[RMDB]
RNA sequence: GGGAACGACUCGAGUAGAGUCGAAAAUUAUGUGCUGGGCGCUGGACAAUGCUUUUUGCACUCAAUGAGGCCCUCCGUCCUACAUGGCCAUGUGCUUUGGCCCUGCACCAGCGGUAUGAUUUACAGCCCGUGGAUAAUCAUUCGUGAUUAUCCACGGAAAAGAAACAACAACAACAAC
Reactivity to 2A3 in 0.01 (KOAc 150mM, MgCl2 10mM, bicine 150mM(pH8.5), 24C), signal-to-noise 7, nucleotides 027 to 126: u030u010a040u060g100u040g000c000u010g000g040g030c140g010c040u010g010g040a050c070a120a120u110g010c010u070u110u030u080u160g000c030a020c020u070c030a040a170u150g010a070g010g030c010c010c030u050c020c050g110u090c040c010u040a110c030a050u080g010g000c010c010a060u120g030u040g030c000u030u010u020g000g010c010c000c010u020g000c000a040c020c000a000g000c000g040g000u090a050u030g070a090u020u030u090a090c040a030g050c000
Reactivity to DMS in 0.01 (KOAc 150mM, MgCl2 10mM, bicine 150mM(pH8.5), 24C), signal-to-noise 3, nucleotides 027 to 126: u000u000a030u010g000u010g020c000u000g000g020g010c130g020c020u020g000g010a100c100a080a180u010g010c050u000u020u040u000u020g000c050a040c070u020c130a120a120u020g000a140g020g020c000c010c030u000c130c090g020u010c030c020u020a060c220a090u000g000g000c070c030a060u030g010u020g000c050u000u020u000g010g000c020c020c080u000g000c000a090c020c020a020g020c010g000g010u030a010u000g020a020u010u000u000a130c080a090g000c100